[RMDB]
RNA sequence: GGGAACGACUCGAGUAGAGUCGAAAACAAAUUAGAAAUUCUAGAUCCUGUCUCACAUGUUUCCCCUAUUAGGAUCUCCUUCCUAGUGUAUGCUUUCUAUAGGGUCAUAUUCUGGGAUUGCAGAAUCACUUGAACAAUUUUUCGAAAUUGUUCAAGUAAAAGAAACAACAACAACAAC
Reactivity to 2A3 in 0.01 (KOAc 150mM, MgCl2 10mM, bicine 150mM(pH8.5), 24C), signal-to-noise 6, nucleotides 027 to 126: c010a010a090a050u260u240a100g110a060a150a060u190u050c040u040a050g010a050u010c020c010u020g050u070c060u030c070a110c020a100u130g090u040u050u020c000c000c000c030u050a110u210u100a080g030g000a010u000c000u000c010c000u010u000c000c000u010a010g010u000g000u020a010u020g020c010u080u100u020c060u100a210u170a180g050g000g050u150c010a000u010a010u020u010c000u000g000g020g000a010u010u020g000c020a000g060a040a040u090c030
Reactivity to DMS in 0.01 (KOAc 150mM, MgCl2 10mM, bicine 150mM(pH8.5), 24C), signal-to-noise 8, nucleotides 027 to 126: c070a060a100a140u010u010a100g010a110a100a080u010u000c050u010a060g010a030u000c010c010u000g010u000c070u000c090a080c160a070u010g010u000u000u000c020c000c010c200u010a080u010u010a040g010g000a020u000c010u000c030c010u000u000c000c000u000a010g020u000g000u000a010u000g000c030u000u000u000c160u010a130u010a100g010g010g000u000c020a010u000a010u000u000c010u000g000g000g000a020u000u000g010c120a070g000a100a070u000c130

The data come from the RNA Mapping Database (RMDB), library OK2TRN.
Structure probing data (2A3 and DMS) for a 177-nucleotide construct.
For 2A3 the reverse transcriptase was SuperScript II with manganese.
DMS adducts were read by reverse transcription with MarathonRT.
For DMS, 13,585 sequencing reads were counted.
Conditions: 150 mM KOAc, 10 mM MgCl2 and 150 mM bicine (pH 8.5), 24 C.